[RMDB]
RNA sequence: GGGAACGACUCGAGUAGAGUCGAAAAUGCCCCCUCCCCAUGCUCUCCCUCUUUCCUCUCUUCCCCUUUCAGCUGCUGUUAUUACGUGGAGUUUGGAGCCUAAGCUUUGAAAACUCCCAUGUGGCGCCACCCCCUGGCAAUUCGUUGCCAGGGGGUGAAAAGAAACAACAACAACAAC
Reactivity to DMS in 0.01 (KOAc 150mM, MgCl2 10mM, bicine 150mM(pH8.5), 24C), signal-to-noise 1, nucleotides 027 to 126: u010g000c010c000c000c100c010u000c000c000c000c040a050u010g060c020u000c000u000c030c020c030u000c050u000u000u000c040c070u000c040u000c040u000u010c010c000c010c130u010u000u010c140a090g060c020u080g020c080u030g000u000u000a080u050u040a070c090g040u040g000g000a000g000u000u030u000g050g000a000g000c000c300u000a150a150g000c000u000u000u010g000a080a030a020a000c030u000c000c000c000a070u020g060u030g000g000c050g030c160
Reactivity to 2A3 in 0.01 (KOAc 150mM, MgCl2 10mM, bicine 150mM(pH8.5), 24C), signal-to-noise 1, nucleotides 027 to 126: u250g010c000c030c000c010c030u020c050c010c000c010a060u090g000c000u020c010u020c000c040c010u000c050u000u010u020c000c000u000c000u000c040u030u010c000c000c000c000u020u130u160c070a020g000c000u060g000c010u030g050u160u140a130u120u170a050c110g020u200g000g000a000g000u000u070u030g000g000a000g000c040c110u170a170a060g000c060u030u070u050g200a010a030a000a000c010u010c040c000c000a050u060g020u000g020g000c010g000c000

Structure probing data (DMS and 2A3) for a 177-nucleotide construct. Source: RMDB library RFM100, as collected in RNAgym. For DMS the reverse transcriptase was MarathonRT. The 2A3 profile rests on 728 reads. Conditions: 150 mM KOAc, 10 mM MgCl2 and 150 mM bicine (pH 8.5), 24 C.